The data come from the RNA Mapping Database (RMDB), library M2PK90. The record gives the reactivity of an RNA of 177 nucleotides to DMS and 2A3. For 2A3 the reverse transcriptase was SuperScript II with manganese. The RNA was probed in 150 mM KOAc, 10 mM MgCl2 and 150 mM bicine (pH 8.5) at 24 C.
RNA sequence: GGGAACGACUCGAGUAGAGUCGAAAAGAGGCGGGAAAGUUAAUCAAAAGUGCAACAAAACUUUCCCUAAAUCAAAUCUAAAUCGUUUUCUUGCACUUUUUUCUUCGAUUUAGAUUUGUAAAACCAAACAUAGAAAGUCAUUCGUGACUUUCUAUGUAAAAGAAACAACAACAACAAC
Reactivity to DMS in 0.01 (KOAc 150mM, MgCl2 10mM, bicine 150mM(pH8.5), 24C), signal-to-noise 3, nucleotides 027 to 126: g000a090g020g070c290g000g010g000a010a020a010g010u000u000a120a120u010c150a020a030a010a010g020u000g010c010a010a080c300a060a050a060a010c010u000u010u000c000c020c000u000a020a050a090u010c010a000a010a010u010c000u000a010a000a000u000c000g000u000u010u000u000c050u000u010g010c000a020c010u000u000u000u000u040u010c160u030u020c060g010a010u010u000u000a000g000a020u000u000u000g010u000a090a060a090a120c030c050a090a090
Reactivity to 2A3 in 0.01 (KOAc 150mM, MgCl2 10mM, bicine 150mM(pH8.5), 24C), signal-to-noise 2, nucleotides 027 to 126: g020a010g000g020c040g000g000g050a030a000a000g040u130u200a110a070u130c070a030a040a000a000g020u010g010c040a120a100c040a110a300a020a010c010u020u000u000c010c010c000u020a010a020a020u060c000a010a000a000u000c000u010a000a010a000u000c000g010u030u000u040u090c060u040u030g000c000a010c000u020u000u020u000u080u070c110u160u180c030g000a000u000u000u000a010g000a000u020u000u030g010u000a050a050a000a000c000c000a060a000